[RMDB]
RNA sequence: GGGAACGACUCGAGUAGAGUCGAAAAUGCUCGAGGACGUCUUCCCUUCCCCCGCGAUUCUUCUUCGACUCGGCCCGGCUCAUUUCGGCAAAGGGCGGCGGUCCUUAGUUCUCUUACUCUUUUCUGUAACGUACCAUCUUCGGAUGGUACAAAAGAAACAACAACAACAAC
Reactivity to DMS in 0.01 (KOAc 150mM, MgCl2 10mM, bicine 150mM(pH8.5), 24C), signal-to-noise 5, nucleotides 027 to 129: u010g020c040u020c000g000a000g000g050a000c040g000u050c150u030u020c000c000c000u000u010c020c010c010c000c090g050c110g020a020u040u030c000u060u040c070u050u000c000g030a070c060u000c050g000g000c000c090c000g000g000c080u050c060a110u020u030u030c080g050g040c090a090a120a090g040g010g040c060g020g030c090g040g020u030c020c000u020u030a120g010u010u000c020u030c020u050u080a090c110u030c060u060u010u010u010c060u000g040u060a090a080c150
Reactivity to 2A3 in 0.01 (KOAc 150mM, MgCl2 10mM, bicine 150mM(pH8.5), 24C), signal-to-noise 8, nucleotides 027 to 129: u040g000c010u000c000g000a000g040g050a180c000g010u040c080u070u060c010c000c000u000u010c000c000c000c000c020g020c050g040a070u070u010c010u070u020c010u030u020c030g030a030c020u000c020g050g000c000c010c000g040g000c020u020c080a110u050u150u040c060g000g000c020a100a070a070g030g000g000c010g020g020c050g010g020u000c000c000u070u070a040g000u050u000c010u010c000u030u040a110c040u090c010u100u040u040u020c030u040g090u100a060a050c060
Structure probing data (DMS and 2A3) for a 170-nucleotide construct. Conditions: 150 mM KOAc, 10 mM MgCl2 and 150 mM bicine (pH 8.5), 24 C. DMS adducts were read by reverse transcription with MarathonRT. Reactivities are rounded to 0.1 and cut off at 0 and 3. It was measured as part of the RMDB library 15KLIB. The DMS profile rests on 24,461 reads.